Chemical mapping of a 177-nucleotide RNA with DMS and 2A3. The 2A3 profile rests on 15,540 reads. The RNA was probed in 150 mM KOAc, 10 mM MgCl2 and 150 mM bicine (pH 8.5) at 24 C. For DMS the reverse transcriptase was MarathonRT.
RNA sequence: GGGAACGACUCGAGUAGAGUCGAAAAUACUCACGCACAAGCCGAAUCAGCAUUUUGCCGGAGUAUCUCUUUGUGCAUCUUGUGCGUUUUUCAUGGAGGGCAGAUACUCAAAAGAAGGCCAAAAUACAAUACCUAUUACGUUCGCGUAAUAGGUAUUAAAAGAAACAACAACAACAAC
Reactivity to DMS in 0.01 (KOAc 150mM, MgCl2 10mM, bicine 150mM(pH8.5), 24C), signal-to-noise 8, nucleotides 027 to 126: u030a140c020u010c030a030c020g010c000a010c010a020a010g010c300c080g010a130a120u050c140a100g020c100a040u000u010u000u010g000c010c000g000g000a010g010u000a010u010c010u010c030u020u010u020g010u030g010c120a090u020c010u010u000g000u000g000c010g000u000u020u030u030u010c150a080u020g000g010a120g000g000g010c160a030g010a030u000a010c010u000c010a100a070a080a140g010a100a120g000g010c040c090a020a010a030a020u010a090c110
Reactivity to 2A3 in 0.01 (KOAc 150mM, MgCl2 10mM, bicine 150mM(pH8.5), 24C), signal-to-noise 9, nucleotides 027 to 126: u120a020c010u010c010a010c000g010c000a000c010a020a010g020c040c030g220a150a150u180c090a080g110c080a080u030u030u050u080g010c010c020g040g000a010g010u010a030u010c040u010c000u060u130u130g140u110g060c040a080u030c010u020u020g010u000g000c000g010u060u030u020u050u120c130a150u160g060g050a060g050g050g000c010a000g010a010u000a010c000u010c040a080a130a050a080g140a050a050g010g010c050c050a030a020a020a010u170a060c110